[RMDB]
RNA sequence: GGGAACGACUCGAGUAGAGUCGAAAAGAUAUGGAGAAGAGCGAUAAGCUGGUGUCGGAAACGACACUCAGCUUUUGACGCUCCUCCUAAGUCAAAAGCUCUGAAAAGGUUCGCCUUUUCAGAGCAACUAAGUGUUACAGUUCGCUGUAACACUUAGAAAAGAAACAACAACAACAAC
Reactivity to DMS in 0.01 (KOAc 150mM, MgCl2 10mM, bicine 150mM(pH8.5), 24C), signal-to-noise 7, nucleotides 027 to 126: g000a040u000a300u010g000g010a020g010a120a110g000a010g020c010g010a140u000a010a010g010c000u000g010g010u000g010u000c000g010g000a090a080a160c000g010a010c000a000c000u010c010a010g010c000u000u000u000u000g010a180c030g010c000u000c010c000u000c000c000u000a030a130g000u000c030a090a090a120a140g000c000u000c010u000g000a000a000a010a010g010g010u000u020c270g010c000c000u000u000u000u000c000a000g000a000g010c000a000a030
Reactivity to 2A3 in 0.01 (KOAc 150mM, MgCl2 10mM, bicine 150mM(pH8.5), 24C), signal-to-noise 5, nucleotides 027 to 126: g030a010u080a040u130g040g010a010g030a300a090g000a040g000c020g040a070u030a160a020g010c000u000g000g010u000g000u010c010g010g000a080a040a040c010g000a000c000a010c010u040c000a000g000c000u000u000u010u030g020a020c000g000c000u000c000c000u000c000c000u020a110a030g010u000c010a030a080a110a150g000c010u010c000u010g010a010a000a000a000g040g010u070u130c260g160c010c000u020u000u000u010c000a000g000a000g000c000a000a000